The data come from the RNA Mapping Database (RMDB), library PDB130. Chemical mapping of a 207-nucleotide RNA with 2A3. Reactivities are given for positions 27 through 156.

[RMDB]
RNA sequence: GGGAACGACUCGAGUAGAGUCGAAAACGGGCCCGCCUGGCCCUGGGAAAGCGUCCCACGGUGGGGGCGCGCCGGUCUCCCGGAGCGGGACCGGGUCGGAGGAUGGACGAGAAUCACGAGCGACGGUGGUGGUGGCGUGUCGGGUUCGUGGCUGCGGGGAAGUCAAUUACUUCGGUAAUUGACUUCCAAAAGAAACAACAACAACAAC
Reactivity to 2A3 in 0.01 (KOAc 150mM, MgCl2 10mM, bicine 150mM(pH8.5), 24C), signal-to-noise 1, nucleotides 027 to 156: c010g000g020g020c010c010c000g080c030c040u050g100g020c030c000c050u080g000g030g000a100a200a000g030c010g020u020c010c030c010a020c080g180g040u160g000g040g000g010g000c050g000c030g000c000c000g030g010u010c060u070c000c060c000g120g110a060g000c090g000g020g000a000c020c000g030g000g010u070c010g010g010a050g040g000a060u050g010g050a030c040g040a020g030a090a070u080c030a010c060g010a010g050c070g040a080c040g020g060u030g020g000u010g030g040u050g000g060c040g000u010g040u050c000g000g000g000u000u020c030g040u020g050g000c050u030g000c050g040g060

The RNA was probed in 150 mM KOAc, 10 mM MgCl2 and 150 mM bicine (pH 8.5) at 24 C. For 2A3 the reverse transcriptase was SuperScript II with manganese.